Source information: Structure probing data (DMS and 2A3) for a 177-nucleotide construct. 2A3 adducts were read by reverse transcription with SuperScript II with manganese. The data come from the RNA Mapping Database (RMDB), library OK1LIB. The DMS profile rests on 857 reads.
[RMDB]
RNA sequence: GGGAACGACUCGAGUAGAGUCGAAAAGCAAUGAUAAACAUAACAGCAGGUGCAAAUUCAGCGACAACACAAGCAGCUAACACAAGACAAGAACGCACGCCUAAACUCGAAAAGGCACCAAAUACUACCCUUCCCAGUAGUUCGCUACUGGGAAGGGAAAAGAAACAACAACAACAAC
Reactivity to DMS in 0.01 (KOAc 150mM, MgCl2 10mM, bicine 150mM(pH8.5), 24C), signal-to-noise 1, nucleotides 027 to 126: g000c060a010a100u060g010a130u040a000a140a090c150a010u030a160a090c080a000g000c000a000g000g030u000g060c000a140a110a040u000u000c020a120g030c060g000a000c090a110a010c050a060c000a120a000g090c200a150g010c190u010a050a120c050a000c290a010a050g020a010c050a060a110g000a000a010c140g000c050a000c020g000c110c000u000a040a040a000c150u070c000g000a080a000a070a080g010g000c000a020c000c020a090a050a000u000a060c140u110a000
Reactivity to 2A3 in 0.01 (KOAc 150mM, MgCl2 10mM, bicine 150mM(pH8.5), 24C), signal-to-noise 2, nucleotides 027 to 126: g050c030a010a000u110g000a060u100a070a230a010c060a070u150a120a020c020a070g040c000a010g000g080u020g000c050a040a070a070u060u010c000a000g020c030g050a030c020a090a050c050a010c010a030a060g000c030a010g030c030u110a120a020c000a030c020a170a010g120a020c020a000a050g000a070a100c060g060c040a030c040g000c020c020u080a140a120a100c060u040c030g100a100a010a000a000g040g000c000a000c030c000a000a080a030u160a110c030u050a010